[RMDB]
RNA sequence: GGGAACGACUCGAGUAGAGUCGAAAAAGAAAGAACUCCUUGAGAAGUUGGCGUGGCGAACAGAGGCAGUCUUAGCGACGGACGUCACUUCCUUCUUGUUACUUAAAUUGCUGGGGGGCUCCCAACAAUGGUAUCGGUAAUUCGUUACCGAUACCAUAAAAGAAACAACAACAACAAC
Reactivity to 2A3 in 0.01 (KOAc 150mM, MgCl2 10mM, bicine 150mM(pH8.5), 24C), signal-to-noise 6, nucleotides 027 to 126: a000g110a000a030a000g070a050a050c010u020c030c020u080u090g040a040g010a100a020g010u090u080g010g000c030g000u010g010g020c010g010a070a020c060a050g090a040g270g020c050a050g060u080c070u110u160a050g010c030g060a030c020g000g030a020c000g010u010c000a000c000u060u100c020c010u020u050c020u050u080g120u090u030a020c000u020u060a020a080a210u160u100g040c060u060g000g000g000g030g030g000c010u020c000c010c010a050a020c050a020
Reactivity to DMS in 0.01 (KOAc 150mM, MgCl2 10mM, bicine 150mM(pH8.5), 24C), signal-to-noise 5, nucleotides 027 to 126: a070g020a080a070a080g020a110a100c070u010c020c020u000u000g010a070g010a030a050g000u020u030g020g010c300g000u000g000g000c010g020a060a090c080a080g010a170g020g000c020a050g010u000c100u010u010a120g030c040g000a100c090g010g010a170c060g010u000c010a040c020u010u020c030c020u000u030c030u000u000g000u020u010a100c100u030u030a060a070a080u020u010g010c050u000g000g000g000g000g000g010c060u000c010c010c030a110a060c180a080

This 177-nucleotide RNA was probed chemically with 2A3 and DMS. The reactions ran in a buffer of 150 mM KOAc, 10 mM MgCl2 and 150 mM bicine (pH 8.5), at 24 C. 2A3 adducts were read by reverse transcription with SuperScript II with manganese.